[RMDB]
RNA sequence: GGGAACGACUCGAGUAGAGUCGAAAAGCUCAGGAUGAACGCUGGCGGCGUGCCUAAUACAUGCAAGUCGAACGGAAACCUUCGGGUUUUAGUGGCGAACGGGUGAGUAACACGUAAGCAACCUACCUGCUUUCUAUGUAUUCGUACAUAGAAAGCAAAAAGAAACAACAACAACAAC
Reactivity to DMS in 0.01 (KOAc 150mM, MgCl2 10mM, bicine 150mM(pH8.5), 24C), signal-to-noise 9, nucleotides 027 to 126: g010c030u000c030a090g000g010a100u010g010a100a090c100g010c030u000g010g020c060g000g010c030g020u000g010c040c050u000a080a070u010a110c100a050u000g010c070a050a110g020u000c020g000a100a060c050g010g000a030a040a040c010c010u000u010c170g020g010g000u000u000u000u000a050g020u000g000g010c030g010a140a070c080g010g000g000u000g000a100g010u000a070a080c060a050c040g020u010a060a120g000c060a060a080c040c040u000a110c160c090
Reactivity to 2A3 in 0.01 (KOAc 150mM, MgCl2 10mM, bicine 150mM(pH8.5), 24C), signal-to-noise 5, nucleotides 027 to 126: g020c020u020c060a020g090g040a140u130g040a110a020c050g010c050u040g070g010c030g020g030c020g040u020g010c010c010u110a170a030u140a110c060a030u110g040c020a030a060g040u020c010g040a060a040c010g060g000a020a010a020c000c000u050u100c200g040g000g000u000u020u020u060a040g010u070g030g030c010g000a040a010c040g040g000g030u040g030a050g010u040a040a030c020a000c090g020u020a040a050g010c020a000a040c000c010u040a080c020c020

The record gives the reactivity of an RNA of 177 nucleotides to DMS and 2A3. 2A3 adducts were read by reverse transcription with SuperScript II with manganese. Values cover nucleotides 27 to 126.